Conditions: 150 mM KOAc, 10 mM MgCl2 and 150 mM bicine (pH 8.5), 24 C. This 207-nucleotide RNA was probed chemically with 2A3. 2A3 adducts were read by reverse transcription with SuperScript II with manganese. Reactivities are given for positions 27 through 156. For 2A3, 927 sequencing reads were counted.

[RMDB]
RNA sequence: GGGAACGACUCGAGUAGAGUCGAAAAGUCGCUGUUUUUGUGGCUGGCUUUCAGCGGGCUGGAGGAGCCGGGAGCGGAGGCGGAGGACCGAGCCAAAAACGUCAGCCGAGGCCGGGCGGCCCCGCUCAAAAUCUUCGUAUCUUCGGAUACGAAGAAACAGAGUAAGUCUGUUCGCAGACUUACUCUGAAAAGAAACAACAACAACAAC
Reactivity to 2A3 in 0.01 (KOAc 150mM, MgCl2 10mM, bicine 150mM(pH8.5), 24C), signal-to-noise 1, nucleotides 027 to 156: g000u000c000g030c020u040g060u030u040u050u050u120g080u050g030g020c030u040g020g000c020u020u080u040c040a020g000c070g040g010g020c030u060g040g070a040g020g010a010g070c010c000g070g040g010a050g000c050g010g030a130g010g020c040g020g050a070g030g020a060c020c010g020a060g000c000c030a060a010a010a100a040c060g050u090c040a020g000c030c000g010a010g000g010c000c010g000g000g030c010g030g010c020c000c000c000g030c000u040c040a100a120a020a040u000c000u010u000c020g000u000a000u000c010u000u060c220g010g000a000u000a010c000g000a000a000g000a000a000a000